Structure probing data (2A3) for a 207-nucleotide construct. Values are in units of 0.01, from 0 to 300, in steps of 10. The RNA was probed in 150 mM KOAc, 10 mM MgCl2 and 150 mM bicine (pH 8.5) at 24 C. It was measured as part of the RMDB library M2RFPK.

RNA sequence: GGGAACGACUCGAGUAGAGUCGAAAAAAGCUUUUGUGACUUGCUGAAACGGGACUAAUCUCCUCACCGAGGCUAAGCAAGUAAAAUACGCCUCUCAUAUCCUUACCUGAGGGUGGUAAGGAAAUAACCUGCAACGCUUCCUUCGGGAAGCGUUGAAACCCUACUCUUUCUUCGGAAAGAGUAGGGUAAAAGAAACAACAACAACAAC
Reactivity to 2A3 in 0.01 (KOAc 150mM, MgCl2 10mM, bicine 150mM(pH8.5), 24C), signal-to-noise 1, nucleotides 027 to 156: a000a000g030c070u110u010u030u070g070u030g090a030c010u030u040g010c000u020g020a000a000a060c080g010g000g030a030c010u060a080a060u040c010u020c030c010u040c020a070c000c100g070a010g040g060c030u080a010a010g000c010a000a020g060u150a040a040a000a000u100a000c060g000c010c000u000c010u000c000a060u020a050u200c000c000u010u000a000c010c030u070g010a060g010g130g000u020g010g000u000a000a000g000g040a040a040a000u030a020a010c010c060u160g000c000a010a000c000g020c000u000u000c010c000u010u130c120g000g000g050a010a010g000c000g010u010u000g000a000a000